[RMDB]
RNA sequence: GGGAACGACUCGAGUAGAGUCGAAAAAGCAGCGGAGGCUGCAGAACAGCAAAUAUUGCUGAACAGCAAAUGUUGCUGCCUGAUCGUUCCUCUGGAAGCUUCAUCUCAGAGGGGUACCCAGCCAUGUGAGGUGUCUGUCUGCCCCUACUGGAGGGUACUAUAUUACCGCUUUCGAGCGGUAAUAUAGAAAAGAAACAACAACAACAAC
Reactivity to DMS in 0.01 (KOAc 150mM, MgCl2 10mM, bicine 150mM(pH8.5), 24C), signal-to-noise 3, nucleotides 027 to 156: a100g010c030a030g030c030g040g010a260g000g000c060u000g030c000a040g000a110a300c010a020g000c000a030a130a110u000a150u010u000g030c020u000g010a090a100c070a090g000c010a040a070a120u000g010u000u000g000c000u010g000c010c050u000g010a170u000c020g010u000u000c000c000u000c040u000g010g020a130a180g010c090u000u000c110a170u010c020u000c010a040g010a050g020g020g030g020u000a020c040c020c010a120g050c030c030a090u000g020u000g010a120g020g030u010g010u000c040u010g000u000c060u010g020c000c000c010c010u000a060c000u010g020g000a300g000g000g040u010a130
Reactivity to 2A3 in 0.01 (KOAc 150mM, MgCl2 10mM, bicine 150mM(pH8.5), 24C), signal-to-noise 4, nucleotides 027 to 156: a010g000c020a010g000c030g050g060a050g090g010c000u030g000c030a010g040a070a020c000a000g020c010a000a050a050u200a150u180u030g000c020u080g070a110a070c050a030g010c010a020a030a100u220g030u070u040g000c000u000g030c000c010u140g020a190u110c040g030u090u030c000c000u000c020u030g040g070a080a040g040c030u130u100c060a130u020c060u000c020a010g010a000g030g000g000g000u010a010c000c000c010a020g050c030c000a020u140g060u100g180a130g040g070u030g040u070c050u060g050u030c020u040g010c010c010c000c000u080a220c000u030g060g030a040g030g010g010u030a040